[RMDB]
RNA sequence: GGGAACGACUCGAGUAGAGUCGAAAAGAUAUGGAAUGUAAUAGUACAUAUUCUCCGUUGAAAUCGGAAACGAUGGAGGAGAUAUGGAACUUACAUUCCUAAGUCAAAACACCAGUUCGCUGGUGAACCGUUUUCAAAUGUUCGCAUUUGAAAACGGAAAAGAAACAACAACAACAAC
Reactivity to 2A3 in 0.01 (KOAc 150mM, MgCl2 10mM, bicine 150mM(pH8.5), 24C), signal-to-noise 1, nucleotides 027 to 126: g020a020u090a030u180g000g010a030a000u010g000u020a010a030u010a050g010u000a000c060a020u020a030u170u240c010u000c010c000g160u280u000g040a020a010a010u000c010g000g040a080a040a050c000g030a010u020g000g010a030g000g000a010g010a000u000a010u000g000g020a000a000c000u000u000a000c000a000u000u040c000c000u000a020a020g000u000c010a070a010a080a050c000a000c000c000a000g000u040u060c300g070c120u000g000g030u000g010a050a080
Reactivity to DMS in 0.01 (KOAc 150mM, MgCl2 10mM, bicine 150mM(pH8.5), 24C), signal-to-noise 1, nucleotides 027 to 126: g040a040u010a300u010g000g000a000a000u000g000u000a000a010u000a030g000u000a110c010a000u000a000u010u010c030u000c000c010g000u000u010g000a120a110a030u000c010g000g020a190a110a200c000g010a010u000g000g000a150g020g010a000g000a020u010a010u000g000g000a180a090c150u000u000a000c000a020u000u000c010c000u000a000a050g020u010c030a100a060a110a090c010a020c000c010a020g010u000u040c250g030c030u020g000g000u000g030a100a260